Structure probing data (2A3 and DMS) for a 177-nucleotide construct. 2A3 adducts were read by reverse transcription with SuperScript II with manganese. DMS adducts were read by reverse transcription with MarathonRT. The 2A3 profile rests on 7,602 reads. Conditions: 150 mM KOAc, 10 mM MgCl2 and 150 mM bicine (pH 8.5), 24 C. The data come from the RNA Mapping Database (RMDB), library OK2TRN. Reactivities are given for positions 27 through 126.
RNA sequence: GGGAACGACUCGAGUAGAGUCGAAAACAGCGGCUACAACAUGAACCCUGUCUUCAUAUACUUGGUGCCGAAGCCCUGCCCCCGCGAGCGUAUCGUGCUCCCUGGUUUGUGCGCUCGGCCGGUACGCGAUAUAAAUAAAUUUCGAUUUAUUUAUAUCAAAAGAAACAACAACAACAAC
Reactivity to 2A3 in 0.01 (KOAc 150mM, MgCl2 10mM, bicine 150mM(pH8.5), 24C), signal-to-noise 4, nucleotides 027 to 126: c020a010g030c070g030g000c030u140a060c060a130a000c010a100u090g050a060a020c020c040c070u050g070u040c040u090u050c040a030u140a010u040a210c040u050u080g040g010u060g040c040c030g050a040a020g030c000c000c010u030g030c000c010c020c000c000g050c020g030a030g000c010g010u040a010u140c020g020u070g010c000u040c030c000c000u060g120g000u080u130u130g080u050g010c040g010c010u020c030g040g000c010c010g020g000u010a010c020g000c010
Reactivity to DMS in 0.01 (KOAc 150mM, MgCl2 10mM, bicine 150mM(pH8.5), 24C), signal-to-noise 8, nucleotides 027 to 126: c070a050g010c100g020g010c020u000a090c080a070a090c170a050u010g000a070a080c050c050c050u000g010u000c090u000u000c070a070u010a110u000a080c090u000u000g020g010u000g010c050c030g000a100a110g010c020c010c010u000g010c020c010c020c020c030g020c140g010a130g020c020g020u000a030u000c050g010u010g000c020u000c030c030c030u000g010g010u000u010u010g020u000g020c030g010c050u000c080g000g010c020c010g000g010u000a010c050g010c060